[RMDB]
RNA sequence: GGGAACGACUCGAGUAGAGUCGAAAACCCGCUUUAUUCACUGGGGUCGACAACUCUGGGGAGAAAAGGGAGGAUCGGAUGGGAAGAGUAUAUCCUAUGGGAAUCCGUGGUUUCCUCUUAUGUCCAGCUCAUUUUAACACUUCGGUGUUAAAAUGAGAAAAGAAACAACAACAACAAC
Reactivity to 2A3 in 0.01 (KOAc 150mM, MgCl2 10mM, bicine 150mM(pH8.5), 24C), signal-to-noise 2, nucleotides 027 to 126: c000c000c000g050c040u180u210u100a190u130u100c080a060c190u050g000g000g090g000u060c030g190a070c000a100a040c010u000c000u070g000g000g010g030a090g100a010a100a010a020g050g050g000a010g070g010a030u010c020g080g000a070u040g060g020g000a080a000g080a050g160u100a030u040a030u150c000c020u060a080u150g120g000g080a100a060u050c010c040g030u040g000g010u020u050u060c040c000u000c010u040u060a100u090g140u010c000c010a040g000
Reactivity to DMS in 0.01 (KOAc 150mM, MgCl2 10mM, bicine 150mM(pH8.5), 24C), signal-to-noise 1, nucleotides 027 to 126: c000c000c000g000c150u000u000u000a060u020u000c040a050c090u000g000g000g010g000u010c040g000a060c200a070a120c050u010c030u000g000g010g000g000a040g000a060a090a100a050g000g000g000a050g000g020a120u020c050g010g000a020u000g010g000g000a020a070g010a130g010u000a050u010a050u000c040c010u000a080u000g000g020g010a140a060u000c000c020g020u010g000g000u000u000u010c030c020u010c040u000u010a090u000g020u000c020c050a100g010
Chemical mapping of a 177-nucleotide RNA with 2A3 and DMS.
DMS adducts were read by reverse transcription with MarathonRT.
Source: RMDB library VIROID, as collected in RNAgym.